RNA sequence: GGGAACGACUCGAGUAGAGUCGAAAAAGUGAGGCUUAUCCCGGGGAACUCGACUUAUCGUCCCCACAUAGCAGUUUCCAGGACCCCCUUCCAAAAAGACUGAGGGGGGUGGCUAGGACGCAGGGGAAAACUCCAGUGUUCGCACUGGAGAAAAGAAACAACAACAACAAC
Reactivity to 2A3 in 0.01 (KOAc 150mM, MgCl2 10mM, bicine 150mM(pH8.5), 24C), signal-to-noise 8, nucleotides 027 to 129: a000g150u120g020a020g070g040c050u080u060a040u100c010c000c040g000g000g000g020a020a010c030u020c060g040a050c070u120u140a080u200c070g050u020c030c000c040c000a070c040a050u130a030g030c050a000g010u030u070u010c010c010a010g000g020a030c000c000c000c000c000u010u000c010c010a040a080a040a070a060g110a090c170u150g010a020g010g000g000g040g000g000u000g010g020c000u040a090g000g010a010c010g000c030a030g040g010g000g000a020a060a010a030
Reactivity to DMS in 0.01 (KOAc 150mM, MgCl2 10mM, bicine 150mM(pH8.5), 24C), signal-to-noise 7, nucleotides 027 to 129: a080g030u040g020a030g040g030c050u030u020a050u040c060c000c000g050g020g030g000a000a000c040u000c010g010a050c120u000u000a080u060c000g000u020c010c020c020c000a080c190a080u060a060g050c070a060g000u000u000u000c020c020a110g000g000a100c050c010c000c010c010u050u000c020c150a100a090a110a060a060g030a120c230u050g030a050g010g010g010g010g000g010u020g010g060c010u020a050g040g020a060c030g030c040a120g030g030g000g080a050a030a100a110